[RMDB]
RNA sequence: GGGAACGACUCGAGUAGAGUCGAAAAUGCAGCGGCAGAGCUGGGGGCACGGCCGGUCCUCGUGGUGCAGCCCAGGAAGACGAGCCUCGACUACGCAGAGGAUGCGGUGAUAGAGGCCCUCGCGAGCCCCUCGGUACUAUUUCGAUAGUACCGAGGGAAAAGAAACAACAACAACAAC
Reactivity to 2A3 in 0.01 (KOAc 150mM, MgCl2 10mM, bicine 150mM(pH8.5), 24C), signal-to-noise 2, nucleotides 027 to 126: u090g000c010a010g020c040g060g000c050a040g020a060g130c080u180g030g010g000g000g030c070a040c040g020g010c020c010g000g000u000c000c000u090c070g300u190g100g000u100g000c000a030g030c020c040c010a010g090g000a040a070g160a050c160g040a030g020c010c020u000c010g000a040c010u040a020c020g000c050a030g040a020g080g060a020u100g300c000g080g000u030g050a160u070a140g160a150g030g000c010c000c000u000c000g030c000g000a020g000c000
Reactivity to DMS in 0.01 (KOAc 150mM, MgCl2 10mM, bicine 150mM(pH8.5), 24C), signal-to-noise 2, nucleotides 027 to 126: u020g020c080a070g000c090g000g000c070a040g010a240g020c030u000g010g000g000g000g050c050a110c040g000g030c060c030g000g000u000c010c020u000c040g040u010g010g010u060g010c030a020g020c010c020c080a070g000g010a090a060g020a120c230g010a120g000c000c010u000c180g030a060c050u010a060c020g000c040a180g010a070g000g020a060u000g020c000g010g030u010g020a110u010a170g000a110g000g000c040c020c000u010c020g010c000g010a250g000c120